RNA sequence: GGGAACGACUCGAGUAGAGUCGAAAAUCAAUGUCUAUCCAAGUCUUUGCAUUAGGAUCUAAUUGCAACAUUGAGUCUUUGAGGGUCAUGAGCUGAGAGUAUGUCAGUCCAGGGGCAAAGCCUGCAGCAACGUAUUAAUAUUCGUAUUAAUACGUUGAAAAGAAACAACAACAACAAC
Reactivity to 2A3 in 0.01 (KOAc 150mM, MgCl2 10mM, bicine 150mM(pH8.5), 24C), signal-to-noise 9, nucleotides 027 to 126: u050c020a010a040u060g050u020c010u090a120u030c030c020a040a040g070u010c050u080u100u100g030c040a050u040u070a090g070g090a090u040c020u120a080a100u130u130g030c030a030a020c010a080u030u110g030a050g060u020c030u060u070u100g050a090g020g020g010u060c040a060u070g030a020g030c030u040g030a030g000a020g120u130a080u220g090u070c020a010g020u020c010c010a020g030g000g000g000c020a040a020a020g030c010c010u040g030c010a030g030
Reactivity to DMS in 0.01 (KOAc 150mM, MgCl2 10mM, bicine 150mM(pH8.5), 24C), signal-to-noise 9, nucleotides 027 to 126: u010c040a040a030u020g010u010c050u010a070u010c040c040a070a080g010u010c040u010u010u010g020c050a050u010u000a090g000g010a080u030c110u010a050a060u020u010g020c110a060a060c120a050u010u010g000a050g010u000c030u000u010u010g010a080g010g000g000u010c050a060u010g000a090g010c050u000g010a070g000a110g010u020a050u010g010u010c040a040g000u000c040c030a050g000g010g000g000c050a040a050a090g010c020c010u000g010c120a110g010
This 177-nucleotide RNA was probed chemically with 2A3 and DMS. Values cover nucleotides 27 to 126. It was measured as part of the RMDB library OK1LIB. The DMS profile rests on 55,443 reads. The RNA was probed in 150 mM KOAc, 10 mM MgCl2 and 150 mM bicine (pH 8.5) at 24 C. 2A3 adducts were read by reverse transcription with SuperScript II with manganese.